[RMDB]
Background:
Source: RMDB library OK3TST, as collected in RNAgym. This 207-nucleotide RNA was probed chemically with DMS and 2A3. For 2A3, 3,317 sequencing reads were counted. Conditions: 150 mM KOAc, 10 mM MgCl2 and 150 mM bicine (pH 8.5), 24 C.
RNA sequence: GGGAACGACUCGAGUAGAGUCGAAAAUGACCAAUCCAGCUACUUUCAAGAAAUAUUCAGCAUCCCUUACUGAUCCCCUUGCGGCAUAAGCUGAAGCCAAAUCAAAUGUCACGUCCAAAAGACCGUGGGCAACAUGCCAUUGUAAGUUAUGCAGGUGAGCUAUCACCUAAUUCGUUAGGUGAUAGCUAAAAGAAACAACAACAACAAC
Reactivity to DMS in 0.01 (KOAc 150mM, MgCl2 10mM, bicine 150mM(pH8.5), 24C), signal-to-noise 3, nucleotides 027 to 156: u010g020a140c030c020a110a140u000c020c020a080g010c030u000a050c060u000u010u000c080a080a150g020a070a090a110u000a150u000u010c040a040g020c010a080u010c030c000c030u010u000a220c040u020g000a070u000c000c020c030c010u000u000g020c090g000g020c020a040u010a070a150g000c020u000g000a110a080g010c040c050a040a060a110u000c060a050a080a100u000g020u000c030a030c060g010u000c030c010a020a090a080a110g010a080c050c050g000u000g030g010g000c030a060a090c070a040u010g010c020c010a130u000u010g010u000a040a050g000u010u000a100u000g010c020a070g030g010u010g000
Reactivity to 2A3 in 0.01 (KOAc 150mM, MgCl2 10mM, bicine 150mM(pH8.5), 24C), signal-to-noise 5, nucleotides 027 to 156: u100g030a020c030c010a030a020u070c010c020a030g030c040u060a070c020u080u110u190c090a120a030g090a090a180a040u240a100u070u060c030a000g010c000a060u070c010c020c000u060u070a110c100u170g080a180u120c050c000c000c040u050u070g040c060g060g020c040a040u020a090a070g030c000u030g060a030a020g030c010c010a020a090a080u120c070a040a050a050u080g020u040c010a010c040g010u000c010c030a030a110a060a000g020a020c050c060g020u050g030g020g000c000a020a020c000a070u080g030c020c010a040u020u070g010u050a020a060g000u020u060a020u150g020c010a010g050g010u050g050